[RMDB]
RNA sequence: GGGAACGACUCGAGUAGAGUCGAAAAUGAGGUAACAAGAUGCAAGUUUCAGUUGAAACCACUCAAGGCCUUGGCCGCCGUGUAACGAUUACUAUCGCUGCUGACAGCAUCGAGACCGCUGUUAAAAGCACUUGACAUCAUUCGUGAUGUCAAGUGCAAAAGAAACAACAACAACAAC
Reactivity to DMS in 0.01 (KOAc 150mM, MgCl2 10mM, bicine 150mM(pH8.5), 24C), signal-to-noise 2, nucleotides 027 to 126: u000g000a130g020g050u000a100a060c080a070a210g010a030u000g010c050a060a100g030u020u000u020c000a100g030u000u010g010a070a080a100c190c030a050c030u000c110a110a180g030g040c000c070u010u010g030g000c020c080g000c160c120g000u000g040u000a030a080c040g010a030u010u000a080c300u000a080u000c030g000c020u010g000c040u000g000a020c050a130g010c000a030u000c060g040a200g000a050c100c030g000c080u000g030u000u000a020a100a090a090
Reactivity to 2A3 in 0.01 (KOAc 150mM, MgCl2 10mM, bicine 150mM(pH8.5), 24C), signal-to-noise 2, nucleotides 027 to 126: u120g020a030g040g000u070a200a080c080a030a080g010a010u010g030c050a100a090g010u030u080u000c000a050g010u010u070g050a160a070a040c030c000a020c010u070c090a090a060g010g000c050c000u080u120g110g000c040c040g000c020c000g050u030g000u020a090a040c010g010a010u000u140a130c100u210a040u030c010g020c020u000g030c060u050g000a020c010a020g010c000a030u030c010g010a030g010a020c000c020g000c060u040g100u150u140a040a060a010a010
This 177-nucleotide RNA was probed chemically with DMS and 2A3.
The RNA was probed in 150 mM KOAc, 10 mM MgCl2 and 150 mM bicine (pH 8.5) at 24 C.
2A3 adducts were read by reverse transcription with SuperScript II with manganese.